[RMDB]
RNA sequence: GGGAACGACUCGAGUAGAGUCGAAAAACGACACAAUUCGUUGUGUCGUAAUGGAAUAGGCUAGGACCGGCCAGACAAAGGUCCGAAAAGAUCGAAAGAUCACACGCCACGAAUUCGUUCGUGGCAAGCACCAUUACUGAUUCGUCAGUAAUGGUGCAAAAGAAACAACAACAACAAC
Reactivity to DMS in 0.01 (KOAc 150mM, MgCl2 10mM, bicine 150mM(pH8.5), 24C), signal-to-noise 2, nucleotides 027 to 126: a030c000g000a010c010a010c000a020a020u000u020c200g020u000u000g040u000g020u000c030g000u010a010a130u000g000g050a140a150u020a080g000g010c000u000a120g020g000a020c000c000g000g000c000c000a150g020a070c210a040a050a090g000g010u030c010c010g010a040a060a090a070g010a000u000c010g000a120a070a150g010a030u000c000a100c200a060c190g000c010c010a010c000g020a020a020u000u010c230g000u000u000c000g030u000g000g040c000a020a000
Reactivity to 2A3 in 0.01 (KOAc 150mM, MgCl2 10mM, bicine 150mM(pH8.5), 24C), signal-to-noise 3, nucleotides 027 to 126: a010c000g000a000c000a010c000a010a060u110u110c180g070u120u020g000u000g000u000c000g000u010a010a060u100g040g040a090a140u080a210g010g000c020u040a070g020g000a000c000c010g010g000c020c040a040g010a030c130a030a160a000g000g000u000c000c000g010a000a010a020a010g000a000u020c010g020a060a030a030g000a000u010c000a000c000a020c110g010c000c000a010c000g010a000a010u130u110c190g050u090u000c000g000u020g010g010c000a000a010
This 177-nucleotide RNA was probed chemically with DMS and 2A3. The data come from the RNA Mapping Database (RMDB), library M2PK50. For 2A3, 6,590 sequencing reads were counted. Conditions: 150 mM KOAc, 10 mM MgCl2 and 150 mM bicine (pH 8.5), 24 C.